RNA sequence: GGGAACGACUCGAGUAGAGUCGAAAACAUCACUCGCGCAAGGUGACCGAGAUGGCAUGAGCAAAACUACAGUUAACUUCAUGCGGGCGCGAGUGCUUCCGCCAGCCAUGAUGGAAUCUGUCUCGGAGUCAUGGUAGCUAUUCGUAGCUACCAUGACAAAAGAAACAACAACAACAAC
Reactivity to 2A3 in 0.01 (KOAc 150mM, MgCl2 10mM, bicine 150mM(pH8.5), 24C), signal-to-noise 4, nucleotides 027 to 126: c040a020u110c010a000c000u010c000g010c000g000c040a070a080g190g090u090g180a120c000c050g000a010g030a030u010g050g000c010a000u010g010a020g030c040a010a140a090a030c070u290a180c080a110g020u060u070a090a050c020u060u070c040a000u010g010c000g030g050g000c020g020c010g010a000g010u000g000c000u070u020c000c020g040c020c020a040g020c050c000a110u220g020a040u090g070g060a070a080u060c040u060g030u020c010u000c000g010g030a030
Reactivity to DMS in 0.01 (KOAc 150mM, MgCl2 10mM, bicine 150mM(pH8.5), 24C), signal-to-noise 3, nucleotides 027 to 126: c180a080u010c010a000c000u000c010g000c020g030c020a150a130g020g030u010g020a160c010c000g010a050g010a040u000g010g030c020a020u000g000a030g010c100a040a110a050a030c040u010a100c300a180g000u000u010a140a170c130u000u000c010a020u010g010c030g000g000g010c020g010c020g000a000g020u000g000c150u010u000c030c020g020c050c080a080g020c080c090a090u010g010a110u000g020g000a050a080u000c040u000g000u010c010u000c010g000g010a260